RNA sequence: GGGAACGACUCGAGUAGAGUCGAAAAGCACGUUCAGCGACGACGUCAACAGGUGUUACCUCAUCUCCUACGUUAGCCAGGAGCUCAGGAAAUGGCAAUGCCACGUCUUCCUGAUCUGGUGAAUAAACACGGAUAUCGGAUUCGUCCGAUAUCCGUGAAAAGAAACAACAACAACAAC
Reactivity to DMS in 0.01 (KOAc 150mM, MgCl2 10mM, bicine 150mM(pH8.5), 24C), signal-to-noise 2, nucleotides 027 to 126: g030c090a070c080g030u000u000c050a070g000c090g010a120c130g000a020c060g030u000c030a130a110c130a070g000g030u000g010u000u000a100c070c020u000c080a110u000c040u000c000c030u000a090c110g000u040u000a110g000c000c000a040g000g000a120g060c300u030c020a000g000g000a010a060a060u000g010g010c020a120a130u010g010c000c040a090c210g000u030c110u000u010c000c000u000g000a040u000c010u000g020g010u030g000a070a100u010a090a090a150
Reactivity to 2A3 in 0.01 (KOAc 150mM, MgCl2 10mM, bicine 150mM(pH8.5), 24C), signal-to-noise 1, nucleotides 027 to 126: g040c030a000c050g030u060u050c050a060g030c030g110a030c050g000a000c010g040u040c020a040a000c030a060g000g070u040g050u030u060a070c020c020u010c010a050u010c000u000c020c000u030a080c070g120u010u080a000g000c010c020a070g010g060a110g070c040u030c020a000g010g060a020a060a050u040g020g000c100a090a140u200g040c030c010a070c050g080u060c010u020u000c010c000u030g000a020u000c000u020g020g010u070g030a020a090u100a030a060a000